[RMDB]
RNA sequence: GGGAACGACUCGAGUAGAGUCGAAAAGAUAGUCAGUCGACGCAACAGAUGUAGCAAUACAUCGAUACACUGCACUGCACUCAGCUCGCCGACGAAAGCGCCUGCUGAGCCUAUCGGUCGGCCGGUGUGGCCCCAUGGCAUUCGUGCCAUGGGGCCAAAAAGAAACAACAACAACAAC
Reactivity to 2A3 in 0.01 (KOAc 150mM, MgCl2 10mM, bicine 150mM(pH8.5), 24C), signal-to-noise 1, nucleotides 027 to 126: g080a030u090a010g000u010c040a000g000u030c000g060a030c250g020c000a130a020c010a020g000a000u000g000u000a000g000c000a000a200u020a110c000a020u000c130g000a000u000a000c000a000c000u020g060c110a000c020u030g060c060a000c030u000c000a000g060c000u000c000g060c000c000g030a200c100g000a020a030a080g220c170g000c000c060u130g020c120u160g000a090g030c110c000u190a290u070c030g040g000u000c000g100g000c000c000g060g060u010g000
Source: RMDB library OK1LIB, as collected in RNAgym.
This 177-nucleotide RNA was probed chemically with 2A3.
For 2A3, 404 sequencing reads were counted.
2A3 adducts were read by reverse transcription with SuperScript II with manganese.
Values cover nucleotides 27 to 126.